[RMDB]
RNA sequence: GGGAACGACUCGAGUAGAGUCGAAAAGAUAUGGAGUCAUCACGAACUACGAGUCACAGUCGGAAACGACUGAAGUCUCGCGUGAGUGACUCCUAAGUCAAAACCACCGUACUUCGGUACGGUGGAACUACAAUCGCCUGUUCGCAGGCGAUUGUAGAAAAGAAACAACAACAACAAC
Reactivity to DMS in 0.01 (KOAc 150mM, MgCl2 10mM, bicine 150mM(pH8.5), 24C), signal-to-noise 1, nucleotides 027 to 126: g010a020u000a300u050g000g000a040g000u000c000a060u010c000a040c010g000a120a110c250u020a300c060g040a000g020u000c130a140c010a010g000u000c000g040g030a110a060a190c000g030a000c000u020g000a050a060g020u000c000u000c000g000c000g030u000g000a140g030u000g000a020c000u000c000c000u000a000a060g000u000c050a080a030a090a140c000c000a000c020c000g000u000a000c000u000u050c290g010g000u000a000c010g000g000u000g000g000a000a090
Reactivity to 2A3 in 0.01 (KOAc 150mM, MgCl2 10mM, bicine 150mM(pH8.5), 24C), signal-to-noise 1, nucleotides 027 to 126: g020a000u010a070u140g020g000a010g000u000c000a010u000c050a010c010g070a250a170c230u300a160c300g020a000g000u050c020a020c020a080g020u000c020g000g000a040a020a050c020g000a000c020u000g010a110a010g050u040c000u040c040g180c050g010u010g040a230g130u070g000a000c000u020c000c000u000a010a000g020u010c020a000a000a070a180c000c000a000c020c010g000u000a000c000u050u070c300g180g000u000a000c000g080g000u000g000g020a000a000
An RNA of 177 nucleotides, treated with DMS and 2A3 and read out base by base. For DMS, 748 sequencing reads were counted. Values cover nucleotides 27 to 126. 2A3 adducts were read by reverse transcription with SuperScript II with manganese. For 2A3, 1,997 sequencing reads were counted. It was measured as part of the RMDB library TTRDES. The RNA was probed in 150 mM KOAc, 10 mM MgCl2 and 150 mM bicine (pH 8.5) at 24 C.